[RMDB]
RNA sequence: GGGAACGACUCGAGUAGAGUCGAAAAGAAAGAAAGGUCGGAAGAGGUACGGUGGGACGUGCCUCAAGAAUUGAUCAGGAUUUACCGCUCUUAUGGGCGCGCAUCACGGCCCCGGUGAUGGCGUGAAUUCUCUUACGAACUUCGGUUCGUAAGAGAAAAAAGAAACAACAACAACAAC
Reactivity to 2A3 in 0.01 (KOAc 150mM, MgCl2 10mM, bicine 150mM(pH8.5), 24C), signal-to-noise 3, nucleotides 027 to 126: g060a020a090a000g050a050a080a000g050g010u100c050g040g060a110a070g000a050g000g010u010a030c000g000g090u140g040g060g090a090c010g000u030g010c000c000u040c050a000a010g140a050a030u110u110g050a050u080c050a050g090g070a020u050u010u130a090c010c000g050c030u010c000u070u120a100u210g030g020g000c020g000c020g010c020a010u040c000a000c020g060g000c000c010c000c030g000g000u010g020a050u010g000g050c000g000u030g060a060a050
Reactivity to DMS in 0.01 (KOAc 150mM, MgCl2 10mM, bicine 150mM(pH8.5), 24C), signal-to-noise 3, nucleotides 027 to 126: g020a070a090a060g000a140a160a080g000g010u000c040g000g010a180a160g000a010g000g020u000a000c010g020g000u020g020g000g010a200c010g010u010g000c010c000u010c000a010a050g010a140a110u030u010g000a060u020c020a060g000g020a160u000u000u010a140c060c010g010c050u010c030u010u030a130u020g010g000g000c010g010c010g000c030a020u000c010a010c040g020g000c040c000c020c050g020g000u000g010a010u000g000g000c010g030u010g000a070a190
An RNA of 177 nucleotides, treated with 2A3 and DMS and read out base by base.
The 2A3 profile rests on 2,482 reads.
The RNA was probed in 150 mM KOAc, 10 mM MgCl2 and 150 mM bicine (pH 8.5) at 24 C.
The data come from the RNA Mapping Database (RMDB), libraries RFM100 and RFMREP.
For 2A3 the reverse transcriptase was SuperScript II with manganese.